[RMDB]
RNA sequence: GGGAACGACUCGAGUAGAGUCGAAAACGCUGUACACCGGGAAUGCAUCGAACUCGCGUUUAAGCGGUCUGUAAGGCCGUCGGCGUCCUGGGGAAGGGUCACGGAAGUGACCCUUCUUUUUUAUUGUCAUUUUAGAAUGGUUCGCCAUUCUAAAAUGAAAAGAAACAACAACAACAAC
Reactivity to DMS in 0.01 (KOAc 150mM, MgCl2 10mM, bicine 150mM(pH8.5), 24C), signal-to-noise 1, nucleotides 027 to 126: c040g000c060u010g000u000a070c250a090c020c000g030g010g010a040a080u000g040c120a160u020c140g020a080a070c030u000c140g000c130g000u020u010u000a110a140g000c000g000g000u000c030u000g000u020a040a030g010g020c000c000g010u010c010g010g000c040g010u000c000c010u010g000g000g010g000a020a000g000g020g040u000c000a000c000g040g060a090a200g010u000g010a020c000c000c000u000u000c020u000u000u000u000u010u030a100u010u010g000u010